Description:
Chemical mapping of a 177-nucleotide RNA with DMS and 2A3. The DMS profile rests on 1,328 reads.

RNA sequence: GGGAACGACUCGAGUAGAGUCGAAAAGAUAUGGACUCGACACGGGAGCUACAAUCGGAAACGAUUGAAUAGCGAAGAACGUGAUCGAGUCCUAAGUCAAAUCCCUUUCAGUUCGCUGAAAGGGAAAGUUGAUGGAAAACUUCGGUUUUCCAUCAACAAAAGAAACAACAACAACAAC
Reactivity to DMS in 0.01 (KOAc 150mM, MgCl2 10mM, bicine 150mM(pH8.5), 24C), signal-to-noise 1, nucleotides 027 to 126: g010a050u000a210u010g000g000a040c000u010c010g000a000c010a000c010g000g030g080a210g030c010u000a040c000a010a000u000c000g000g000a030a040a070c000g000a000u000u000g020a100a220u000a000g020c000g010a090a170g020a200a120c030g000u000g000a170u000c000g000a020g020u000c020c000u000a000a100g000u020c000a120a070a120u000c000c010c000u000u010u010c000a000g020u010u010c300g000c010u010g010a000a000a020g000g000g010a000a000a040
Reactivity to 2A3 in 0.01 (KOAc 150mM, MgCl2 10mM, bicine 150mM(pH8.5), 24C), signal-to-noise 1, nucleotides 027 to 126: g000a010u040a020u050g010g000a020c000u020c030g040a000c000a000c030g300g200g130a110g000c000u000a010c000a020a010u000c000g000g060a000a000a020c010g000a000u000u030g040a230a300u010a030g020c060g000a150a080g290a230a020c000g000u000g080a300u020c010g040a000g000u000c000c000u000a000a000g000u000c020a050a000a000u000c000c000c000u000u050u000c000a020g000u030u110c230g000c180u020g000a000a000a000g060g020g040a040a070a000